Chemical mapping of a 177-nucleotide RNA with 2A3 and DMS.

RNA sequence: GGGAACGACUCGAGUAGAGUCGAAAAACAUGUACAGAGGCACAAGGGAUCUGGCGGGUGCAGACCUCUUCCAACUUUCCAGAUAGAUGCAUUCAGGAGGUACGAUAAUUCUCCCUGUGCAGUCACCUGAUGUACCGCUUUUCGAAGCGGUACAUCAAAAAGAAACAACAACAACAAC
Reactivity to 2A3 in 0.01 (KOAc 150mM, MgCl2 10mM, bicine 150mM(pH8.5), 24C), signal-to-noise 4, nucleotides 027 to 126: a000c040a060u090g010u090a010c000a020g090a090g030g020c030a050c040a110a110g080g050g000a040u010c030u020g030g000c000g040g030g000u020g030c040a030g050a100c030c030u050c000u100u020c030c000a060a030c040u070u150u030c000c030a000g020a040u060a090g090a070u070g050c030a050u000u120c040a050g000g030a010g040g010u120a080c080g060a130u130a150a080u200u030c020u020c020c000c000u020g000u010g020c010a010g060u040c020a030c030c020
Reactivity to DMS in 0.01 (KOAc 150mM, MgCl2 10mM, bicine 150mM(pH8.5), 24C), signal-to-noise 2, nucleotides 027 to 126: a050c080a060u030g030u020a060c060a040g000a060g000g000c050a050c110a090a130g000g000g000a040u000c060u000g000g000c160g000g000g030u000g000c080a090g000a110c050c110u000c040u020u010c050c030a120a060c090u000u020u040c030c050a070g010a060u000a080g000a240u000g000c000a020u040u010c120a140g000g000a010g000g010u000a080c190g000a090u050a130a180u010u020c020u000c010c000c000u000g040u020g000c060a060g000u020c060a090c020c070
Annotation: For DMS, 2,606 sequencing reads were counted. The 2A3 profile rests on 2,692 reads. For DMS the reverse transcriptase was MarathonRT. Conditions: 150 mM KOAc, 10 mM MgCl2 and 150 mM bicine (pH 8.5), 24 C.